[RMDB]
RNA sequence: GGGAACGACUCGAGUAGAGUCGAAAAGAUAUGGACAUCGAUCGUCGAACUACCACUACACAUCGGAAACGAUGUUAAGUGGCGACGGGAGUCCUAAGUCAAACUAGUCUACUUCGGUAGACUAGAAGAGUUAAGUUGACUUCGGUCAACUUAACUCAAAAGAAACAACAACAACAAC
Reactivity to 2A3 in 0.01 (KOAc 150mM, MgCl2 10mM, bicine 150mM(pH8.5), 24C), signal-to-noise 2, nucleotides 027 to 126: g020a010u120a030u130g020g000a010c060a300u190c100g160a190u090c010g020u020c010g020a090a100c070u250a060c210c020a000c010u070a020c000a000c000a020u010c030g000g050a080a040a030c020g000a000u000g000u000u000a120a040g000u000g000g040c000g010a010c000g000g030g000a020g020u000c000c000u010a120a020g050u050c060a040a060a150c010u000a000g000u000c000u000a010c020u040u050c280g120g010u010a000g000a010c000u010a000g010a000a040
Reactivity to DMS in 0.01 (KOAc 150mM, MgCl2 10mM, bicine 150mM(pH8.5), 24C), signal-to-noise 2, nucleotides 027 to 126: g040a030u000a300u010g010g020a020c010a200u000c070g010a110u000c010g000u010c010g020a070a060c120u030a300c060c000a000c010u000a230c300a010c000a010u000c000g000g000a140a060a240c000g020a000u000g000u010u000a070a020g010u000g000g000c000g010a030c010g030g020g010a100g010u000c000c000u000a030a040g010u000c080a100a050a230c010u000a000g020u000c000u000a000c000u000u010c130g010g030u000a010g000a010c000u000a000g000a030a070